The record gives the reactivity of an RNA of 177 nucleotides to 2A3 and DMS. For 2A3 the reverse transcriptase was SuperScript II with manganese. It was measured as part of the RMDB library TTRDEL. The 2A3 profile rests on 1,786 reads.

RNA sequence: GGGAACGACUCGAGUAGAGUCGAAAAGAUAUGGACCGGCCAUGGAGCUGUUUCGGAAACGAACAGCUAUGAAGUGGCGGUCCUAAGUCAAAACGGAUGACCCUAAGUUCGCUUAGGGUCAUCCGAAGCUUAACUGACAGUUCGCUGUCAGUUAAGCAAAAGAAACAACAACAACAAC
Reactivity to 2A3 in 0.01 (KOAc 150mM, MgCl2 10mM, bicine 150mM(pH8.5), 24C), signal-to-noise 1, nucleotides 027 to 126: g030a000u030a040u160g000g010a000c040c000g290g300c070c010a000u040g000g080a020g030c010u040g040u250u300u110c010g020g040a090a050a120c010g010a010a000c020a010g000c000u070a290u020g050a050a020g030u010g010g010c000g000g030u000c000c000u000a050a000g000u000c030a010a010a090a090c000g060g000a010u030g000a030c000c000c010u000a040a000g040u060u210c300g000c150u000u050a000g040g000g030u000c000a000u000c010c000g000a000a000
Reactivity to DMS in 0.01 (KOAc 150mM, MgCl2 10mM, bicine 150mM(pH8.5), 24C), signal-to-noise 2, nucleotides 027 to 126: g010a050u000a300u010g000g000a000c000c000g020g030c000c000a010u000g000g000a030g010c000u000g000u000u000u000c020g010g000a090a070a180c000g030a020a020c000a020g000c000u000a130u000g000a120a150g020u000g000g000c000g000g010u000c000c000u000a000a060g020u000c030a100a070a130a210c020g000g000a010u000g000a000c010c000c000u000a010a020g000u000u010c220g010c000u000u000a000g020g000g010u000c000a000u010c020c000g000a010a020